[RMDB]
RNA sequence: GGGAACGACUCGAGUAGAGUCGAAAAUGGCGGCGUAAGCGGCGAUUGCUUCGGCGCGGGUUACCGGGUCGCUCACGCUUCCUCCCCUGUAGCCACAACCGCAGCAGCAGCGUUCUUCACCCCCGCGAUCAGCGCGCGGAGCUUGUCCACGCGGAAGCACUGGAGUCUUAUUCGUAAGACUCCAGUGAAAAGAAACAACAACAACAAC
Reactivity to 2A3 in 0.01 (KOAc 150mM, MgCl2 10mM, bicine 150mM(pH8.5), 24C), signal-to-noise 1, nucleotides 027 to 156: u140g000g000c050g000g000c010g000u010a010a000g030c030g060g000c020g110a220u090u300g040c040u100u090c050g000g000c030g010c010g030g020g000u100u130a040c020c020g030g070g000u040c020g000c020u010c010a020c000g010c000u050u000c010c030u040c010c000c000c010u060g070u100a060g030c010c040a060c020a080a040c000c030g030c050a030g000c020a010g030c010a020g020c070g010u000u050c030u190u170c040a120c010c000c000c010c010g020c000g040a150u160c080a030g070c010g000c010g000c000g030g020a040g010c050u100u120g000u040c020c010a010c080g020c000g060g020a010a020g010
Reactivity to DMS in 0.01 (KOAc 150mM, MgCl2 10mM, bicine 150mM(pH8.5), 24C), signal-to-noise 1, nucleotides 027 to 156: u000g050g050c020g000g030c020g040u010a040a060g040c000g010g030c040g030a200u000u010g020c110u000u010c050g030g010c050g110c050g030g000g000u000u000a040c010c040g020g010g000u010c050g020c010u000c020a020c040g000c020u010u000c000c010u020c000c000c000c130u000g020u000a130g020c020c000a040c030a090a110c040c020g040c030a090g020c040a130g000c030a100g030c000g010u010u000c000u020u020c060a180c030c000c010c010c000g000c020g000a090u010c080a200g000c040g020c000g030c030g050g000a100g040c100u000u000g050u000c030c030a060c000g030c020g000g050a080a160g000
An RNA of 207 nucleotides, treated with 2A3 and DMS and read out base by base. Values are in units of 0.01, from 0 to 300, in steps of 10. The RNA was probed in 150 mM KOAc, 10 mM MgCl2 and 150 mM bicine (pH 8.5) at 24 C.